[RMDB]
RNA sequence: GGGAACGACUCGAGUAGAGUCGAAAACUGCUUGAUUCUGAUUUUCAGUACUAAUCGGAACUGGGAAACCAGGGCCUAUCGAUCCUUUAUGUGCUUAAAUCUUAACCCUAGAGGUGUCAGAAAAGUUACCACAGGGAUAACUGGCUUGUGGCAGCCACUUAACGUCAUACUUCGGUAUGACGUUAAGAAAAGAAACAACAACAACAAC
Reactivity to 2A3 in 0.01 (KOAc 150mM, MgCl2 10mM, bicine 150mM(pH8.5), 24C), signal-to-noise 4, nucleotides 027 to 156: c020u020g030c010u030u080g070a070u140u000c010u030g020a030u050u030u030u140c070a030g050u110a090c070u070a050a030u040c030g000g000a010a010c000u000g030g000g000a040a030a040c010c010a020g000g030g020c020c010u030a060u100c050g060a040u020c000c000u060u190u050a070u190g030u030g020c010u030u080a070a070a090u050c000u060u070a050a060c010c010c000u040a070g060a100g110g020u030g080u050c010a000g050a030a130a020a020g040u090u170a040c030c010a030c060a050g000g040g000a020u030a070a060c100u060g000g010c000u040u050g050u050g070g010c020a000g040c010c000a030
Reactivity to DMS in 0.01 (KOAc 150mM, MgCl2 10mM, bicine 150mM(pH8.5), 24C), signal-to-noise 1, nucleotides 027 to 156: c050u020g010c020u010u000g010a120u000u020c000u000g010a040u000u000u000u010c030a240g000u010a180c120u000a030a020u000c030g010g000a030a060c030u050g010g000g000a120a130a090c010c010a040g000g010g050c030c020u010a110u000c050g030a110u000c010c050u000u000u010a070u070g000u010g010c030u000u000a020a050a200u000c050u000u000a140a070c040c000c030u010a170g000a180g030g030u010g020u020c120a090g010a090a130a050a040g000u000u010a050c020c000a050c080a010g040g030g000a060u000a070a130c090u010g020g020c030u010u000g040u000g030g010c000a090g010c000c040a070